[RMDB]
RNA sequence: GGGAACGACUCGAGUAGAGUCGAAAAUGUCAUGGUUGACAGGCUGGAUACAGUAUAAGAGCCUGGUUUAUAGGCAUCACCGGCCACAAAGAUACGGAUAGAACGCAACUCUCCCAUGGUGAUAUUGGACUCAAUGCCUAUCAUCUGAUGCUUGAUGCUCUAGAUUGGUGUUCGCACCAAUCUAGAGAAAAGAAACAACAACAACAAC
Reactivity to DMS in 0.01 (KOAc 150mM, MgCl2 10mM, bicine 150mM(pH8.5), 24C), signal-to-noise 1, nucleotides 027 to 156: u010g030u000c010a020u010g050g010u010u000g010a050c010a070g090g000c010u000g000g010a200u010a220c050a200g040u030a300u000a190a270g010a240g030c010c000u000g050g000u010u010u000a140u010a030g030g020c100a050u000c000a100c040c010g000g000c000c070a100c030a040a090a140g010a150u010a150c050g000g000a150u000a170g020a190a050c050g030c070a040a090c030u000c030u000c040c030c020a140u000g020g020u000g000a060u000a030u030u010g110g000a060c070u000c090a030a210u000g010c030c000u010a010u060c090a000u000c050u010g010a050u010g020c030u010u030g010a190u010g000
Reactivity to 2A3 in 0.01 (KOAc 150mM, MgCl2 10mM, bicine 150mM(pH8.5), 24C), signal-to-noise 2, nucleotides 027 to 156: u090g000u020c020a040u070g090g090u090u080g040a000c010a050g000g030c000u040g020g050a130u120a110c070a160g110u170a180u020a260a050g000a000g000c000c010u010g000g020u000u030u030a160u090a020g010g000c000a030u030c020a030c030c000g030g040c060c020a050c030a030a070a010g100a040u160a040c010g020g000a010u030a080g130a100a010c020g000c070a060a060c040u030c000u000c010c010c020a010u050g000g000u020g010a020u030a020u130u210g010g040a120c030u040c240a120a130u190g010c000c000u040a020u030c010a020u000c070u040g020a070u120g050c020u060u030g050a060u200g030